Structure probing data (DMS and 2A3) for a 177-nucleotide construct.
Source: RMDB library M2PK50, as collected in RNAgym.
For DMS the reverse transcriptase was MarathonRT.
2A3 adducts were read by reverse transcription with SuperScript II with manganese.
Reactivities are given for positions 27 through 126.
For DMS, 3,199 sequencing reads were counted.
Conditions: 150 mM KOAc, 10 mM MgCl2 and 150 mM bicine (pH 8.5), 24 C.
[RMDB]
RNA sequence: GGGAACGACUCGAGUAGAGUCGAAAAGCGACGACGUUCGCGUCGUCGCAAAAUAUCGCAGGCGUGGGACAACGCCAGAGAUAAACUCAAAUAGUCCCAAUAAAAUCUCACGGUUCGCCGUGAGAAACAGUUUAAAAUGGUUCGCCAUUUUAAACUGAAAAGAAACAACAACAACAAC
Reactivity to DMS in 0.01 (KOAc 150mM, MgCl2 10mM, bicine 150mM(pH8.5), 24C), signal-to-noise 3, nucleotides 027 to 126: g000c000g030a010c000g010a000c010g000u000u010c160g020c000g020u000c000g010u000c010g030c010a010a020a030a090u000a020u000c020g000c130a110g000g000c010g010u000g020g010g030a180c120a120a070c010g020c010c010a060g000a100g000a060u000a040a110a130c140u000c100a050a090a070u000a140g000u000c000c000c010a130a100u010a040a070a090a130u000c000u000c000a000c000g000g000u000u010c200g040c000c000g030u000g000a000g010a000a020a130
Reactivity to 2A3 in 0.01 (KOAc 150mM, MgCl2 10mM, bicine 150mM(pH8.5), 24C), signal-to-noise 3, nucleotides 027 to 126: g000c010g010a000c000g010a010c010g030u060u130c210g010c000g070u000c000g010u000c020g020c000a020a010a000a000u020a000u000c030g030c100a040g010g010c020g040u100g010g010g050a060c030a230a040c180g000c000c010a010g000a000g010a010u130a070a170a070c040u020c040a030a050a010u050a040g030u010c010c010c010a000a000u090a050a040a000a050u040c000u010c000a020c000g000g040u040u030c130g040c060c000g000u000g000a000g000a000a010a000